Source: RMDB library ARCHII, as collected in RNAgym. Chemical mapping of a 207-nucleotide RNA with 2A3 and DMS. For DMS the reverse transcriptase was MarathonRT. The reactions ran in a buffer of 150 mM KOAc, 10 mM MgCl2 and 150 mM bicine (pH 8.5), at 24 C. The DMS profile rests on 6,885 reads.
[RMDB]
RNA sequence: GGGAACGACUCGAGUAGAGUCGAAAAGUAUCCGCUUCGGCGGAUACACUUGCGGUCCAAUGGUCCAGUGGUUCAAGACGUCGCCUUUACACGGCGAAGAUCCCGAGUUCGAACCUCGGUUGGAUCACCAUAACGAGACUACCUUCGGGUAGUCUAAAUAGAAAAGUAGAUUCGUCUACUUUUCUAUAAAAGAAACAACAACAACAAC
Reactivity to 2A3 in 0.01 (KOAc 150mM, MgCl2 10mM, bicine 150mM(pH8.5), 24C), signal-to-noise 5, nucleotides 027 to 156: g000u000a000u010c000c010g000c000u030u040c190g150g000c000g000g000a000u000a000c000a010c000u080u170g070c100g020g000u020c010c010a020a030u020g040g000u010c010c010a020g030u100g160g140u170u190c080a000a020g010a000c010g010u000c000g000c010c000u070u180u110a120c150a030c080g000g000c000g000a000a010g000a010u040c010c010c000g010a000g000u020u040c020g010a010a010c000c000u000c000g000g000u010u020g000g000a010u040c010a020c030c030a060u140a150a050c110g050a030g000a050c000u010a000c000c010u070u120c260g070g000g000u000a000g000u000c000u010a010a020
Reactivity to DMS in 0.01 (KOAc 150mM, MgCl2 10mM, bicine 150mM(pH8.5), 24C), signal-to-noise 4, nucleotides 027 to 156: g010u010a000u000c000c000g010c010u000u010c300g060g020c000g000g010a010u000a010c000a050c080u000u000g000c040g020g030u000c020c040a050a090u000g020g000u010c020c020a070g020u000g040g000u000u000c090a060a080g000a060c020g020u000c010g020c020c010u020u000u010a200c190a150c300g000g020c010g010a040a050g010a060u000c050c010c020g020a080g030u000u000c080g000a300a110c120c010u000c030g020g010u000u020g010g010a050u000c010a040c020c050a050u000a120a120c100g000a070g000a030c010u000a010c010c000u000u010c230g040g030g040u000a000g000u000c010u000a000a050